[RMDB]
An RNA of 177 nucleotides, treated with 2A3 and DMS and read out base by base. The data come from the RNA Mapping Database (RMDB), library OK2TST. The RNA was probed in 150 mM KOAc, 10 mM MgCl2 and 150 mM bicine (pH 8.5) at 24 C. Values are in units of 0.01, from 0 to 300, in steps of 10. For DMS the reverse transcriptase was MarathonRT.

RNA sequence: GGGAACGACUCGAGUAGAGUCGAAAAGUGCGUGAUUUGGGGUCUCGUUUGUACGUUAGUUAUCAGACGGCACACCGUUAUUUGUUACAAUUAGAAACGAAAGGAAAGAUUAAACGGUCUCACCAUAAUACAGAAGAUACUUCGGUAUCUUCUGUAUAAAAGAAACAACAACAACAAC
Reactivity to 2A3 in 0.01 (KOAc 150mM, MgCl2 10mM, bicine 150mM(pH8.5), 24C), signal-to-noise 4, nucleotides 027 to 126: g030u040g010c040g050u070g060a170u040u040u110g090g000g010g010u000c020u000c040g010u040u070u130g080u040a040c050g030u030u180a070g020u030u030a140u160c010a010g010a040c000g030g000c040a010c010a000c040c000g000u040u030a080u070u080u050g080u030u080a070c050a090a110u050u110a100g130a110a080a000c060g040a100a050a030g090g040a100a060a010g050a050u070u180a070a120a000c030g000g000u000c020u020c010a050c020c010a060u130a160
Reactivity to DMS in 0.01 (KOAc 150mM, MgCl2 10mM, bicine 150mM(pH8.5), 24C), signal-to-noise 8, nucleotides 027 to 126: g010u000g000c050g030u000g010a100u000u000u000g020g020g010g010u000c030u010c030g010u000u010u000g010u000a040c090g010u010u010a100g010u010u010a090u010c050a050g010a030c030g010g010c140a070c120a070c020c010g010u000u000a090u000u000u000g010u010u000a090c080a050a120u020u010a090g000a070a060a070c070g010a050a060a180g000g000a070a060a090g000a080u000u010a050a050a060c060g000g000u000c060u010c040a100c080c080a080u010a070